The record gives the reactivity of an RNA of 207 nucleotides to 2A3 and DMS. Conditions: 150 mM KOAc, 10 mM MgCl2 and 150 mM bicine (pH 8.5), 24 C. It was measured as part of the RMDB library M2RFPK. For 2A3 the reverse transcriptase was SuperScript II with manganese.
[RMDB]
RNA sequence: GGGAACGACUCGAGUAGAGUCGAAAAAUACAUACUGACACCGGUUGCUCAACAGGCUGUGUGGGACAAUAGAAUAACAAGGCUGUCAAUUUGAGCUUGACGGCUGCAAACCGAAUGGAGUGACAUCGUAACCGGACUCACUUCGGUGAGUCCGGAACUAUAUUGCUACGUUCGCGUAGCAAUAUAGAAAAGAAACAACAACAACAAC
Reactivity to 2A3 in 0.01 (KOAc 150mM, MgCl2 10mM, bicine 150mM(pH8.5), 24C), signal-to-noise 6, nucleotides 027 to 156: a000u160a020c060a020u120a040c040u080g070a030c020a030c050c020g060g020u020u060g010c020u020c050a080a060c030a120g060g000c060u040g030u040g010u070g140g010g020a020c030a030a110u120a110g110a100a060u120a110a030c060a110a030g050g000c000u000g010u020c010a000a020u080u080u190g040a040g040c000u010u010g010a020c000g010g000c020u030g000c020a060a050a030c030c020g060a050a050u110g030g010a030g030u050g030a030c010a060u080c090g050u050a040a070c000c010g000g000a000c000u000c000a000c000u040u050c160g070g000u000g000a000g000u000c000c000g000g000a000a000
Reactivity to DMS in 0.01 (KOAc 150mM, MgCl2 10mM, bicine 150mM(pH8.5), 24C), signal-to-noise 4, nucleotides 027 to 156: a110u000a100c040a080u000a140c050u000g000a120c030a080c040c030g020g040u000u010g020c040u000c050a090a130c060a100g010g010c030u000g050u000g030u000g010g030g000a080c050a100a100u000a110g010a120a120u010a060a120c040a040a170g010g000c010u000g020u000c010a040a050u000u000u010g010a120g020c300u000u000g010a030c030g020g000c010u000g040c090a050a060a050c030c020g000a080a160u010g010g000a090g010u000g020a100c070a080u000c050g010u000a080a140c010c020g020g000a030c000u000c000a010c020u000u000c280g070g020u010g010a040g000u000c000c010g000g010a000a030